[RMDB]
RNA sequence: GGGAACGACUCGAGUAGAGUCGAAAAGCAAAGAUAUUUUAUCCCAAUAAGGCGAAGUAAGCAAGUCGACCCAACGCGAGGGCGCUAGCGAGCUUACGAGCCCUAGCAGAAUAAUCGCGAGAAAAAACGCUAAAGUAAUCUUCGGAUUACUUUAGCGAAAAGAAACAACAACAACAAC
Reactivity to 2A3 in 0.01 (KOAc 150mM, MgCl2 10mM, bicine 150mM(pH8.5), 24C), signal-to-noise 2, nucleotides 027 to 126: g010c010a080a140a050g110a040u060a170u170u130u090u110a070u080c000c010c000a040a070u160a010a020g030g010c010g000a020a030g050u010a010a000g070c020a040a000g040u100c020g160a300c030c020c000a070a050c040g000c000g050a020g000g010g000c010g000c000u030a000g090c040g170a090g000c000u020u000a020c060g030a000g000c030c000c010u020a020g000c060a030g070a290a110u210a130a040u030c030g000c020g020a060g110a040a130a020a000a000a010
Reactivity to DMS in 0.01 (KOAc 150mM, MgCl2 10mM, bicine 150mM(pH8.5), 24C), signal-to-noise 2, nucleotides 027 to 126: g010c120a130a090a090g020a110u000a050u010u000u000u000a080u000c030c000c000a130a110u000a120a190g010g000c010g000a080a190g000u000a010a070g050c020a100a150g010u000c050g030a150c000c020c010a110a100c040g010c070g010a040g000g000g000c120g010c090u000a030g000c110g000a160g050c020u000u000a040c080g010a290g010c000c030c040u010a010g040c060a110g000a120a050u000a060a050u000c010g030c100g020a270g000a000a020a070a050a090a140

Chemical mapping of a 177-nucleotide RNA with 2A3 and DMS. It was measured as part of the RMDB library M2PK90. For DMS the reverse transcriptase was MarathonRT. The DMS profile rests on 1,051 reads. 2A3 is a SHAPE reagent: it acylates the 2'-hydroxyl of flexible nucleotides of all four kinds. For 2A3 the reverse transcriptase was SuperScript II with manganese. Conditions: 150 mM KOAc, 10 mM MgCl2 and 150 mM bicine (pH 8.5), 24 C.